[RMDB]
Source information: This 177-nucleotide RNA was probed chemically with DMS and 2A3. Source: RMDB library RFM100, as collected in RNAgym. The RNA was probed in 150 mM KOAc, 10 mM MgCl2 and 150 mM bicine (pH 8.5) at 24 C. 2A3 adducts were read by reverse transcription with SuperScript II with manganese.
RNA sequence: GGGAACGACUCGAGUAGAGUCGAAAAGUCAGCUGUUUGUAAGUCCCGUAUUCAACUUGUGCCGCACAGGGCAGGUUGAGGGCCAGACACUGCGCUAUCCCGCAGGGCGACCGAUACACGGGUGUUCUGUGAGCUAGGUUUUCGAACCUAGCUCACAAAAAGAAACAACAACAACAAC
Reactivity to DMS in 0.01 (KOAc 150mM, MgCl2 10mM, bicine 150mM(pH8.5), 24C), signal-to-noise 2, nucleotides 027 to 126: g000u000c040a030g050c140u000g020u000u000u030g020u030a090a040g000u000c000c000c000g060u080a140u080u010c000a000a060c000u020u000g010u000g000c040c000g000c260a070c240a150g000g000g000c030a000g000g050u000u020g000a030g000g000g000c010c300a010g000a060c110a040c020u010g000c170g030c030u000a070u010c000c000c000g020c070a060g000g020g030c040g010a100c030c000g000a170u060a090c190a210c050g060g010g020u020g000u000u010c010
Reactivity to 2A3 in 0.01 (KOAc 150mM, MgCl2 10mM, bicine 150mM(pH8.5), 24C), signal-to-noise 3, nucleotides 027 to 126: g020u010c000a000g000c150u020g030u000u000u000g070u140a040a010g100u150c000c010c040g020u080a180u010u080c010a000a000c000u000u010g000u170g300c010c000g130c060a180c110a200g020g000g000c010a010g020g000u000u000g000a090g000g000g000c000c000a000g020a020c000a000c020u010g000c030g010c110u030a050u050c000c000c020g010c040a020g010g000g030c010g030a060c010c010g010a030u050a160c090a010c030g020g000g000u070g000u030u020c020